[RMDB]
RNA sequence: GGGAACGACUCGAGUAGAGUCGAAAAAUAGACAAGAGUUACAUCACCUGCGUGAUCACUGCAGAGAUAUAUCACAAUGCCCCUGUAGGCAGAGCCUAGACAAGAGUCCCAUCACCUGGGUGAUCAGCCUUAGGGAAUAUUUCGAUAUUCCCUAAGGAAAAGAAACAACAACAACAAC
Reactivity to 2A3 in 0.01 (KOAc 150mM, MgCl2 10mM, bicine 150mM(pH8.5), 24C), signal-to-noise 5, nucleotides 027 to 126: a010u090a020g060a020c060a120a050g050a010g180u150u140a060c030a060u030c010a020c020c010u020g010c040g040u030g020a030u040c040a010c070u050g000c030a000g030a010g040a090u010a030u010a020u200c040a020c040a160a090u110g020c000c000c000c020u060g050u090a040g010g000c030a020g020a010g080c000c020u030a020g020a050c040a080a040g020a020g100u030c010c010c000a000u020c000a010c000c000u030g090g020g000u020g000a030u020c030a010g050
Reactivity to DMS in 0.01 (KOAc 150mM, MgCl2 10mM, bicine 150mM(pH8.5), 24C), signal-to-noise 9, nucleotides 027 to 126: a070u020a070g020a090c100a090a090g000a120g000u010u010a080c120a060u000c030a070c050c010u000g010c240g010u010g010a040u000c070a080c050u000g000c020a040g000a100g020a040u000a040u010a060u000c120a070c110a070a100u000g000c030c010c020c070u000g020u000a030g010g010c070a070g010a120g010c050c030u010a040g000a080c130a060a070g000a110g010u000c010c010c030a090u000c050a040c070c030u000g000g020g020u000g010a030u000c140a110g010
Structure probing data (2A3 and DMS) for a 177-nucleotide construct. For 2A3 the reverse transcriptase was SuperScript II with manganese. For DMS the reverse transcriptase was MarathonRT. Values are in units of 0.01, from 0 to 300, in steps of 10. Conditions: 150 mM KOAc, 10 mM MgCl2 and 150 mM bicine (pH 8.5), 24 C. High DMS reactivity at an A or C suggests that its Watson-Crick edge is free.